Structure probing data (DMS and 2A3) for a 177-nucleotide construct. For 2A3, 21,535 sequencing reads were counted. The reactions ran in a buffer of 150 mM KOAc, 10 mM MgCl2 and 150 mM bicine (pH 8.5), at 24 C. Values cover nucleotides 27 to 126. The data come from the RNA Mapping Database (RMDB), library TTRDEL. DMS adducts were read by reverse transcription with MarathonRT.
RNA sequence: GGGAACGACUCGAGUAGAGUCGAAAAGAUAUGGAUUUCGAACUACGAACUUUAAGACAAUGAUGUCGGAAACGAUUGAGUCUUAUGGUUCGCGAAAUCCUAAGUCAAACAUGGCUUCGGCCAUGAAGUAUUACUGUGUGUUCGCACACAGUAAUACAAAAGAAACAACAACAACAAC
Reactivity to DMS in 0.01 (KOAc 150mM, MgCl2 10mM, bicine 150mM(pH8.5), 24C), signal-to-noise 5, nucleotides 027 to 126: g010a040u000a300u000g000g000a010u000u000u000c000g000a080a100c170u020a300c010g010a010a000c000u000u000u000a010a000g010a020c000a120a190u000g010a090u010g000u000c000g010g000a080a060a150c010g010a000u000u000g000a100g000u000c000u000u000a010u000g000g010u000u000c000g000c010g020a000a010a010u000c000c000u000a020a070g010u000c030a100a110a240c020a000u000g010g010c000u000u020c200g030g020c000c000a000u000g000a040a100
Reactivity to 2A3 in 0.01 (KOAc 150mM, MgCl2 10mM, bicine 150mM(pH8.5), 24C), signal-to-noise 7, nucleotides 027 to 126: g030a010u050a030u160g010g000a000u010u010u020c020g010a140a090c140u150a080c300g010a010a000c000u030u030u020a010a010g010a000c020a130a300u260g070a050u180g070u030c010g020g050a070a050a020c010g000a010u020u080g040a010g010u000c000u000u020a010u030g000g000u010u000c000g000c010g000a010a000a000u000c000c000u010a090a000g030u020c030a050a060a100c010a010u010g000g000c010u090u050c300g140g000c000c000a000u000g000a030a020